Record summary
This 177-nucleotide RNA was probed chemically with 2A3 and DMS. Conditions: 150 mM KOAc, 10 mM MgCl2 and 150 mM bicine (pH 8.5), 24 C. Reactivities are given for positions 27 through 126.

RNA sequence: GGGAACGACUCGAGUAGAGUCGAAAAAUUUUGACGAAGAUGACCUCAGUAACUACUGCAGCAGUACCGCCGACAGUAGAUCUGCCACUCUAAGGAGGGGAGAAGACAUGGAUUUGGACUGCACGGACAUGCAGGGCUAGUUCGCUAGCCCUGCAUGAAAAGAAACAACAACAACAAC
Reactivity to 2A3 in 0.01 (KOAc 150mM, MgCl2 10mM, bicine 150mM(pH8.5), 24C), signal-to-noise 2, nucleotides 027 to 126: a010u140u150u070u140g040a030c020g020a040a100g070a000u060g030a070c020c020u040c030a030g040u070a280a070c060u060a050c020u080g000c040a010g000c020a040g030u090a150c040c050g010c050c020g030a070c020a030g050u100a000g060a020u000c010u040g070c000c010a240c020u020c000u100a090a160g100g020a000g030g050g010g000a070g140a100a000g070a000c050a080u120g060g040a220u010u140u210g040g000a050c000u000g000c070a010c000g000g010a000
Reactivity to DMS in 0.01 (KOAc 150mM, MgCl2 10mM, bicine 150mM(pH8.5), 24C), signal-to-noise 2, nucleotides 027 to 126: a090u000u000u060u000g010a110c100g000a080a020g000a100u000g000a080c140c000u050c000a020g030u050a050a160c120u000a050c040u000g030c060a060g000c020a000g000u070a020c200c080g020c050c020g000a070c060a010g040u000a000g050a020u000c050u000g040c000c040a060c040u020c020u000a260a140g030g010a020g000g040g000g000a120g030a050a020g030a000c040a070u010g000g000a100u010u010u060g000g060a130c050u000g010c030a120c160g000g000a300